[RMDB]
RNA sequence: GGGAACGACUCGAGUAGAGUCGAAAAGCGUCGCGGCGACCGCCAGCGCGAGCACUACCGCAAGCCAGCCGGCCGUGGUGUCCAGGUUGUGGCCGGCGCCGGCGAUGUCAAGGGCGGCCUGGCUUGCGUUAAGGGCAUGGUUCGCCAUGCCCUUAACAAAAGAAACAACAACAACAAC
Reactivity to 2A3 in 0.01 (KOAc 150mM, MgCl2 10mM, bicine 150mM(pH8.5), 24C), signal-to-noise 5, nucleotides 027 to 126: g010c020g130u080c020g030c070g070g060c040g120a210c060c180g040c050c030a040g020c020g010c010g000a030g020c040a030c110u160a070c010c060g000c000a000a010g000c000c000a000g010c010c000g100g070c010c000g030u040g020g000u010g020u000c010c010a040g020g020u090u190g080u190g120g130c040c020g030g020c000g000c000c000g000g020c130g030a030u060g030u040c020a020a030g000g010g040c000g020g000c020c020u000g000g010c000u010u000g000c000
Reactivity to DMS in 0.01 (KOAc 150mM, MgCl2 10mM, bicine 150mM(pH8.5), 24C), signal-to-noise 9, nucleotides 027 to 126: g000c030g010u000c040g020c050g010g010c040g010a120c180c160g010c040c040a140g010c030g010c020g010a120g000c090a130c110u000a130c130c030g010c010a020a020g010c000c000a050g010c000c010g000g000c000c000g000u000g010g000u000g000u000c010c030a240g000g000u000u010g020u010g010g010c030c030g010g010c130g010c010c000g000g040c130g010a020u000g000u000c030a060a060g010g000g000c000g010g000c090c050u000g010g010c000u000u000g000c030